[RMDB]
RNA sequence: GGGAACGACUCGAGUAGAGUCGAAAAACUGCAUUUACGGAUGCAGAACUACGUUCAUCCAAUUUAUUUGGACGCAUGAAAUGAGAAUAGGGAACGGGAUUCUCAUACGCAGGCUACGGCCUGCGAAAAAACUCCUUAUGCUUCGGCAUAAGGAGAACAUUUGAUUGUCCUUCGGGACAAUCAAAUGAAAAGAAACAACAACAACAAC
Reactivity to DMS in 0.01 (KOAc 150mM, MgCl2 10mM, bicine 150mM(pH8.5), 24C), signal-to-noise 1, nucleotides 027 to 156: a170c020u000g040c000a020u000u000u000a150c280g000g020a070u000g020c000a000g000a080a120c000u000a010c000g020u000u000c040a080u010c180c160a090a190u000u000u000a150u040u000u000g000g010a060c000g000c040a040u000g000a140a160a120u000g040a090g000a110a080u000a170g000g000g030a020a070c050g030g020g000a300u000u000c020u000c000a060u000a050c010g000c000a020g000g000c030u000a140c240g000g040c010c000u020g000c060g000a000a070a070a060a040a010c000u000c000c010u000u010a000u000g000c020u000u070c300g030g000c000a000u000a010a000g010g000a000g000a010a050
Reactivity to 2A3 in 0.01 (KOAc 150mM, MgCl2 10mM, bicine 150mM(pH8.5), 24C), signal-to-noise 2, nucleotides 027 to 156: a000c000u000g020c000a000u000u010u050a160c190g080g010a010u010g000c020a020g020a080a010c040u080a020c010g040u030u030c010a010u000c000c020a020a010u100u240u120a200u190u110u030g000g010a000c000g010c050a080u170g080a140a120a030u020g000a030g000a010a020u020a020g040g010g010a010a010c010g010g000g010a000u010u010c010u020c000a010u030a040c030g000c000a000g000g010c000u020a060c270g100g020c000c000u010g000c000g000a010a000a000a000a000a000c000u000c000c000u000u000a000u010g000c000u020u070c220g090g000c010a000u000a010a000g000g000a000g000a000a000

The data come from the RNA Mapping Database (RMDB), library M2RFOK.
The record gives the reactivity of an RNA of 207 nucleotides to DMS and 2A3.
2A3 adducts were read by reverse transcription with SuperScript II with manganese.
Conditions: 150 mM KOAc, 10 mM MgCl2 and 150 mM bicine (pH 8.5), 24 C.
Values cover nucleotides 27 to 156.
For DMS the reverse transcriptase was MarathonRT.